[RMDB]
RNA sequence: GGGAACGACUCGAGUAGAGUCGAAAAGCCAACGGCAAGUACAACAUCAGCUGCGGUUGCUCCUACUCCGACAGUGGUCCCCGCUCGAGAGCCGGAAACAGCUCCAGUGGCCAAGGCUACAGCUCCACUAAGCUGUACAAUUCGUUGUACAGCUUAGAAAAGAAACAACAACAACAAC
Reactivity to 2A3 in 0.01 (KOAc 150mM, MgCl2 10mM, bicine 150mM(pH8.5), 24C), signal-to-noise 7, nucleotides 027 to 126: g040c010c010a040a040c080g060g010c050a080a070g080u100a130c050a190a020c010a230u130c060a050g030c010u030g020c020g060g010u040u040g020c010u000c000c010u020a050c020u020c030c020g080a080c040a060g010u020g020g020u060c010c010c010c000g000c010u030c030g260a300g000a010g040c010c020g040g010a040a060a030c020a020g000c000u000c020c000a020g020u030g050g000c020c030a060a040g010g000c000u010a010c020a030g010c020u010c020c000a050
Reactivity to DMS in 0.01 (KOAc 150mM, MgCl2 10mM, bicine 150mM(pH8.5), 24C), signal-to-noise 9, nucleotides 027 to 126: g010c020c020a070a160c190g000g020c020a070a090g020u010a070c130a080a110c140a090u000c090a130g020c030u000g010c140g000g010u000u000g010c050u000c020c030u000a090c060u000c030c040g000a110c160a050g030u000g010g000u000c010c030c010c040g010c030u000c070g010a120g000a060g010c020c040g010g000a070a070a150c060a070g000c020u000c050c040a050g020u010g010g010c070c040a070a180g010g010c030u000a040c090a100g000c050u010c020c050a210